RNA sequence: GGGAACGACUCGAGUAGAGUCGAAAAUUCCAUUUGAGUAUCCUGAAAACGGGCUUUUCAGCAUGGAACGUACAUAUUAAAUAGUAGGAGUGCAUAGUGGCCCGUAUAGCAGGCAUUCACAUUCCUGAAAACGUGAAAAGGUUCGCCUUUUCACGAACCUAACAGCAACCUUCGGGUUGCUGUUAGGAAAAGAAACAACAACAACAAC
Reactivity to 2A3 in 0.01 (KOAc 150mM, MgCl2 10mM, bicine 150mM(pH8.5), 24C), signal-to-noise 2, nucleotides 027 to 156: u060u020c010c010a040u050u050u070g010a010g040u060a070u150c000c000u000g050a010a000a000a080c000g000g000g030c010u110u200u050u090c050a010g000c000a010u030g030g060a140a020c010g080u030a020c030a020u230a040u240u300a100a220a200u190a110g030u020a070g000g160a040g010u010g000c050a080u060a180g120u040g020g000c000c000c020g000u000a000u060a010g010c000a000g000g000c000a000u030u040c000a000c020a010u090u090c020c020u080g040a010a030a090a040c000g000u010g010a010a010a000a030g030g000u010u070c110g220c000c020u000u000u000u030c000a000c000g000a000a000
Reactivity to DMS in 0.01 (KOAc 150mM, MgCl2 10mM, bicine 150mM(pH8.5), 24C), signal-to-noise 1, nucleotides 027 to 156: u000u030c000c000a110u010u000u000g030a130g030u010a090u000c010c000u000g000a100a070a290a140c040g020g040g030c080u000u020u010u000c090a180g060c020a030u000g000g000a130a030c050g050u000a180c020a140u000a220u000u000a030a110a300u010a100g050u020a110g020g000a120g040u000g030c000a120u000a160g020u000g000g030c000c000c000g010u000a000u000a160g010c000a040g000g030c130a090u000u000c020a060c090a150u020u010c010c000u000g000a090a060a120a140c020g000u000g000a050a010a040a000g020g060u000u000c300g000c030c000u040u000u000u020c000a010c010g010a010a070